RNA sequence: GGGAACGACUCGAGUAGAGUCGAAAAGAUAUGGAACCUGAAGGCUUUUGACGGCUCUGUCGGAAACGACUGAGCCGAUAAGCCUUAGGUUCCUAAGUCAAAAGCGCGUCUCUUCGGAGACGCGCAAGAUAUACAGCUUGUUCGCAAGCUGUAUAUCAAAAGAAACAACAACAACAAC
Reactivity to 2A3 in 0.01 (KOAc 150mM, MgCl2 10mM, bicine 150mM(pH8.5), 24C), signal-to-noise 4, nucleotides 027 to 126: g000a000u020a020u070g000g010a010a000c020c030u110g300a120a020g040g010c050u230u300u300u300g260a060c010g000g010c000u000c010u010g000u000c000g000g030a080a010a010c000g000a000c020u020g000a000g000c000c000g010a000u080a020a000g000c000c000u010u000a000g010g000u000u000c000c000u000a000a000g000u000c020a000a010a130a100g000c010g010c000g000u000c010u000c000u030u120c290g140g000a000g010a000c000g010c000g010c000a000a000
Reactivity to DMS in 0.01 (KOAc 150mM, MgCl2 10mM, bicine 150mM(pH8.5), 24C), signal-to-noise 3, nucleotides 027 to 126: g010a020u000a140u010g000g000a000a000c000c000u010g010a020a020g010g010c010u000u010u000u020g000a160c050g000g010c000u000c010u000g000u000c000g020g000a030a020a070c000g010a010c010u000g000a010g020c000c000g010a010u000a020a050g020c000c000u000u000a010g000g010u000u000c000c010u000a000a040g000u000c030a090a080a140a140g020c000g010c000g010u000c000u000c000u010u020c210g030g010a020g010a010c000g030c010g020c010a010a010
This 177-nucleotide RNA was probed chemically with 2A3 and DMS.
For 2A3 the reverse transcriptase was SuperScript II with manganese.
For DMS, 5,967 sequencing reads were counted.
The 2A3 profile rests on 7,771 reads.
Conditions: 150 mM KOAc, 10 mM MgCl2 and 150 mM bicine (pH 8.5), 24 C.